[RMDB]
RNA sequence: GGGAACGACUCGAGUAGAGUCGAAAAGGGGUCACACCCGAGAUCCUACAGGAGCAACAGCGACACUGAAGCCUCCACGGUGUCGACAUGCUCCUGCGGGAUCGUUUGACGGUGUGACGGAGGCACCCAAAGAUUCUGAUCUUCGGAUCAGAAUCAAGGUCCAUCAUAUGUUCGCAUAUGAUGGACCAAAAGAAACAACAACAACAAC
Reactivity to 2A3 in 0.01 (KOAc 150mM, MgCl2 10mM, bicine 150mM(pH8.5), 24C), signal-to-noise 1, nucleotides 027 to 156: g060g020g050g000u000c000a010c000a000c000c020c000g000a010g000a000u000c000c000u000a010c000a010g010g000a000g010c080a130a140c080a220g010c000g010a000c010a000c000u040g030a080a000g010c000c000u000c000c010a000c030g000g000u000g000u000c000g050a080c040a140u300g000c010u010c000c000u000g000c030g020g000g000a000u000c010g010u090u120u080g010a000c000g020g000u010g000u000g000a000c010g000g000a000g000g000c000a010c000c010c000a060a170a020g000a020u000u000c000u010g000a010u000c000u050u100c220g070g000a000u000c000a000g010a000a000u000c000a000a050